[RMDB]
RNA sequence: GGGAACGACUCGAGUAGAGUCGAAAACGACUCAAUACGUCCCCGUCGUACAGAAUGGUAACAUAUCUCUCCAAAUAUCUGAGCUUGGGUAUACGGGGAAACCCAACCCCUUGGGAAGAUUGGGUAUAAAAGGAGCGAUCCUUCGGGAUCGCUCCAACUCUAGAGUGAACUUCGGUUCACUCUAGAGAAAAGAAACAACAACAACAAC
Reactivity to 2A3 in 0.01 (KOAc 150mM, MgCl2 10mM, bicine 150mM(pH8.5), 24C), signal-to-noise 1, nucleotides 027 to 156: c080g010a010c000u000c030a030a120u070a080c020g100u030c050c010c000c000g030u070c010g020u040a060c020a100g070a070a140u070g050g000u140a130a080c030a090u110a210u070c060u010c010u000c020c030a110a150a120u110a130u010c010u000g020a030g040c040u050u120g010g000g000u010a020u000a020c000g000g000g050g000a020a070a020c000c000c020a020a020c010c000c000c000u010u060g020g010g010a070a030g010a050u020u030g040g000g070u080a120u100a120a090a030a040g010g000a000g010c030g030a000u010c000c000u000u020c090g050g000g000a000u010c000g000c010u040c000c000a010a000

Chemical mapping of a 207-nucleotide RNA with 2A3.
Source: RMDB library M2RFPK, as collected in RNAgym.
Values cover nucleotides 27 to 156.
High 2A3 reactivity points to a flexible backbone, as in loops and unpaired stretches.